[RMDB]
RNA sequence: GGGAACGACUCGAGUAGAGUCGAAAACAAACUAGGGCUGGCUACUCUUGCACAGAAUCACAUCUCGAUAAUUGUCAGUGCAAGAAGGACAAUUAUACCAUUUAAUGUGUCGAGGCCACGCGGAGUAUUUAGUUAUUUCGUUCGCGAAAUAACUAAAAAAAGAAACAACAACAACAAC
Reactivity to DMS in 0.01 (KOAc 150mM, MgCl2 10mM, bicine 150mM(pH8.5), 24C), signal-to-noise 8, nucleotides 027 to 126: c050a110a090a080c080u010a100g010g000g040c010u010g000g010c020u000a300c080u000c000u000u000g000c010a010c000a060g020a090a070u020c120a050c160a070u020c130u030c180g000a080u020a050a060u030u010g010u010c050a070g010u000g000c010a010a010g000a030a080g000g000a000c000a020a010u000u010a020u000a090c290c160a140u020u000u010a060a030u000g020u000g010u000c050g000a150g010g000c020c010a020c130g020c010g000g000a050g010u010a060
Reactivity to 2A3 in 0.01 (KOAc 150mM, MgCl2 10mM, bicine 150mM(pH8.5), 24C), signal-to-noise 9, nucleotides 027 to 126: c020a010a070a030c030u150a100g060g130g000c020u000g000g000c010u040a020c010u040c000u000u010g000c010a010c000a020g140a090a120u120c040a040c020a180u090c070u110c190g080a060u070a150a060u120u070g040u050c050a020g010u010g010c010a010a000g020a020a030g070g000a000c000a010a010u030u020a040u050a110c050c100a060u110u090u090a100a050u140g050u010g010u120c030g040a060g020g010c000c010a010c070g020c010g040g030a050g020u050a100
Overview
Chemical mapping of a 177-nucleotide RNA with DMS and 2A3. As a SHAPE reagent, 2A3 marks flexible, mostly unpaired nucleotides at the ribose 2'-OH. DMS adducts were read by reverse transcription with MarathonRT. For 2A3 the reverse transcriptase was SuperScript II with manganese.